RNA sequence: GGGAACGACUCGAGUAGAGUCGAAAAGUCAGCCAAGGGUUAGUCGAUCCUAAGGUCAGUCAUAAGUUGAGCUGGUCGAAAGGGAAGCAGGUUAAUAUUCCUGUACAUAGUAAAUUUGCGGUGACGUCUAAAAGCAGAACUUCGGUUCUGCUUUUAGAAAAGAAACAACAACAACAAC
Reactivity to 2A3 in 0.01 (KOAc 150mM, MgCl2 10mM, bicine 150mM(pH8.5), 24C), signal-to-noise 1, nucleotides 027 to 126: g010u000c020a060g080c010c050a010a090g080g030g000u030u040a020g020u130c030g050a080u060c010c000u040a020a080g020g030u000c000a010g010u000c010a000u060a300a000g200u050u130g040a090g080c000u010g020g010u040c040g060a100a100a000g020g000g010a060a000g000c010a000g000g030u050u020a060a010u060a080u090u080c000c000u000g010u040a050c040a060u090a000g100u010a060a050a110u070u150u000g040c010g000g040u040g030a020c010g000u010
Reactivity to DMS in 0.01 (KOAc 150mM, MgCl2 10mM, bicine 150mM(pH8.5), 24C), signal-to-noise 1, nucleotides 027 to 126: g020u000c020a060g020c000c010a060a090g000g000g010u010u010a030g020u000c060g000a120u010c010c010u020a070a230g000g000u000c000a050g000u000c040a100u010a070a050g000u010u000g000a070g050c020u010g010g040u000c020g010a110a050a090g000g000g000a140a120g020c010a030g000g000u000u000a040a100u000a200u010u000c010c010u000g030u000a090c140a050u000a130g040u000a050a060a030u000u010u010g030c270g000g050u000g010a020c090g000u000